[RMDB]
Overview: Chemical mapping of a 177-nucleotide RNA with DMS and 2A3. Reactivities are given for positions 27 through 126. DMS adducts were read by reverse transcription with MarathonRT.

RNA sequence: GGGAACGACUCGAGUAGAGUCGAAAAACAGUGACUCAUACGUGAGUCACUGAAGCUAGUUCUCACGAACUAGGCUAAGUUAUGGCGUGCUUUCAGCACUAGAGGUACGACUACGGUCGUACCUCAAAAUCUUUUGUUUUUUCGAAAACAAAAGAUUAAAAGAAACAACAACAACAAC
Reactivity to DMS in 0.01 (KOAc 150mM, MgCl2 10mM, bicine 150mM(pH8.5), 24C), signal-to-noise 8, nucleotides 027 to 126: a140c010a000g010u000g000a010c000u000c000a040u010a110c200g040u010g010a020g010u000c000a000c000u000g010a060a040g010c000u000a010g000u000u000c000u010c300a160c300g010a010a010c000u000a010g010g010c030u010a100a090g010u020u010a080u020g010g010c150g010u000g000c020u000u030u010c190a060g010c010a010c030u010a090g000a010g000g000u000a000c000g000a010c000u000a110c170g040g000u000c000g010u000a000c010c000u000c000a000a030
Reactivity to 2A3 in 0.01 (KOAc 150mM, MgCl2 10mM, bicine 150mM(pH8.5), 24C), signal-to-noise 9, nucleotides 027 to 126: a000c000a000g010u000g000a000c000u010c000a020u040a050c230g150u030g000a000g010u000c010a000c000u000g000a010a000g040c000u000a000g010u010u000c100u030c030a050c120g010a000a000c000u010a020g140g020c030u060a100a040g100u190u150a120u220g160g040c070g020u010g010c020u110u260u280c130a030g000c010a010c030u010a040g000a010g000g000u010a000c010g000a000c010u020a030c240g070g000u000c000g010u000a000c000c000u000c000a000a000